RNA sequence: GGGAACGACUCGAGUAGAGUCGAAAAGACUCAAAAGAGAAGGUGCUUGUUUAAAGUUAGGACGCAGAUCCAGGUCUGCUGACUCAGCCCCUUCAAUGCUGAGCCUGAGUUGAUGCAUGGGCUUCUGAGUUCCAUCUUCAUGCUCAAUGGAGACCCAUGCUAAUCAUCAGUUCGCUGAUGAUUAGCAAAAAGAAACAACAACAACAAC
Reactivity to DMS in 0.01 (KOAc 150mM, MgCl2 10mM, bicine 150mM(pH8.5), 24C), signal-to-noise 2, nucleotides 027 to 156: g000a020c000u020c000a010a140a250a150g000a300g000a050a060g000g030u000g020c030u000u000g010u000u000u000a080a090a110g030u000u000a070g010g010a220c200g020c010a030g000a050u010c050c140a030g060g010u000c000u010g040c000u010g010a190c010u020c030a080g000c000c010c000c000u000u020c040a070a200u020g000c150u000g000a040g030c010c000u000g020a110g010u000u000g000a170u000g000c040a070u010g010g010g020c020u000u000c020u040g020a080g010u000u000c050c010a120u000c040u000u000c000a050u000g020c130u010c060a090a080u040g020g000a050g000a110c010c010c010a100
Reactivity to 2A3 in 0.01 (KOAc 150mM, MgCl2 10mM, bicine 150mM(pH8.5), 24C), signal-to-noise 2, nucleotides 027 to 156: g010a000c000u010c010a010a060a040a000g070a010g000a000a010g020g000u020g010c020u120u130g070u300u150u150a150a110a080g010u110u140a060g050g020a020c030g000c040a000g000a030u040c040c020a060g150g010u010c000u020g010c000u010g030a020c000u000c040a010g010c070c000c000c010u010u020c010a040a080u080g000c060u020g020a030g030c000c020u050g030a060g010u020u020g030a020u040g020c190a010u000g020g010g020c000u110u050c060u210g110a040g050u230u140c000c050a060u000c010u040u030c030a070u130g020c000u000c030a000a140u180g010g000a020g020a050c010c000c000a000

Structure probing data (DMS and 2A3) for a 207-nucleotide construct. For DMS the reverse transcriptase was MarathonRT. Source: RMDB library OK3TST, as collected in RNAgym. Reactivities are given for positions 27 through 156. The reactions ran in a buffer of 150 mM KOAc, 10 mM MgCl2 and 150 mM bicine (pH 8.5), at 24 C.